[RMDB]
RNA sequence: GGGAACGACUCGAGUAGAGUCGAAAAGAAUAAGGGCUGGGCAAGACCGGUGCCAGCCGCCGCGGUAAUACCGGCAGCCCGAGUGAUGACCGCUAUUAUUGGGCCUAAAGCGUCCGUAGCUGGCCAGUAGGUAGUGCCAAUUCGUUGGCACUACCUAAAAAGAAACAACAACAACAAC
Reactivity to DMS in 0.01 (KOAc 150mM, MgCl2 10mM, bicine 150mM(pH8.5), 24C), signal-to-noise 2, nucleotides 027 to 126: g000a140a120u010a070a180g010g010g000c000u010g010g000g110c080a090a090g000a170c130c010g020g020u000g000c010c040a100g040c010c050g000c080c080g060c040g010g040u010a070a100u010a300c020c000g000g010c060a180g010c000c000c030g000a090g020u010g010a050u000g030a120c000c010g000c040u000a030u000u020a100u010u070g020g020g030c000c020u000a090a140a150g040c210g000u000c000c000g050u000a030g000c010u000g030g000c030c020a060g010
Reactivity to 2A3 in 0.01 (KOAc 150mM, MgCl2 10mM, bicine 150mM(pH8.5), 24C), signal-to-noise 2, nucleotides 027 to 126: g050a000a030u200a100a050g010g050g010c050u020g000g000g110c040a070a020g000a090c040c030g000g010u010g020c010c000a010g000c010c010g010c020c010g080c070g000g060u060a000a110u020a190c000c000g000g000c000a020g010c020c000c020g080a010g050u020g030a120u020g030a050c000c010g000c040u010a000u120u030a100u120u190g040g000g040c000c000u190a230a190a010g050c030g050u030c040c000g000u020a030g000c030u050g000g010c030c000a000g030

Conditions: 150 mM KOAc, 10 mM MgCl2 and 150 mM bicine (pH 8.5), 24 C. Chemical mapping of a 177-nucleotide RNA with DMS and 2A3. For 2A3 the reverse transcriptase was SuperScript II with manganese. For DMS, 2,580 sequencing reads were counted. DMS adducts were read by reverse transcription with MarathonRT.